Description: Chemical mapping of a 207-nucleotide RNA with 2A3. The reactions ran in a buffer of 150 mM KOAc, 10 mM MgCl2 and 150 mM bicine (pH 8.5), at 24 C.
[RMDB]
RNA sequence: GGGAACGACUCGAGUAGAGUCGAAAAUCACAGAUAAGGAAAUGGCAGAGUCCAAAUUUGAACCCAGGCAAGUCAGACUCUAGGCACUGAAGUCUCAACCACCAGGCUCUGCACUAAGUGCUCUCCAGGUUUUAUCUCAUUUAAUCCUGCAAGGAAAUGUAUGUGCGUGAUUCGUCACGCACAUACAAAAAGAAACAACAACAACAAC
Reactivity to 2A3 in 0.01 (KOAc 150mM, MgCl2 10mM, bicine 150mM(pH8.5), 24C), signal-to-noise 1, nucleotides 027 to 156: u050c030a030c030a040g040a050u110a280a020g070g020a050a060a120u140g020g020c000a000g010a010g010u030c040c040a110a120a050u140u100u140g050a040a070c050c000c000a000g000g000c020a010a010g070u050c030a000g010a110c000u000c010u060a060g030g000c010a000c090u000g060a130a000g030u030c000u020c030a060a100c040c010a040c010c070a000g020g030c030u000c030u030g000c000a040c030u080a100a000g030u010g050c000u030c000u010c000c030a000g000g110u000u060u060u200a060u010c000u020c080a120u040u100u030a080a050u000c000c000u060g130c080a040a030g090g040a040a040a210

2A3 adducts were read by reverse transcription with SuperScript II with manganese.